The record gives the reactivity of an RNA of 177 nucleotides to DMS. The DMS profile rests on 959 reads. The RNA was probed in 150 mM KOAc, 10 mM MgCl2 and 150 mM bicine (pH 8.5) at 24 C.
RNA sequence: GGGAACGACUCGAGUAGAGUCGAAAAGAUAUGGAUCCAUGAUCCUCGAUAAGAAUGGGUCGGAAACGACCCAAUUCUUUUGACGAGGAUCAUGGAUCCUAAGUCAAAAGCACCGUUCGCGGUGCAAGACCUAUUGUGGGUUCGCCCACAAUAGGUCAAAAGAAACAACAACAACAAC
Reactivity to DMS in 0.01 (KOAc 150mM, MgCl2 10mM, bicine 150mM(pH8.5), 24C), signal-to-noise 1, nucleotides 027 to 126: g010a050u020a300u000g010g000a010u000c000c000a000u000g000a000u000c000c000u010c010g000a260u000a040a000g000a000a020u000g000g000g080u000c000g030g000a090a040a250c000g020a000c000c000c000a010a000u000u000c000u000u000u010u000g000a210c300g000a000g010g000a000u000c020a010u000g010g010a010u010c000c020u000a000a100g010u000c020a100a060a250a130g010c010a030c040c000g010u010u010c300g000c020g000g030u000g010c000a100a040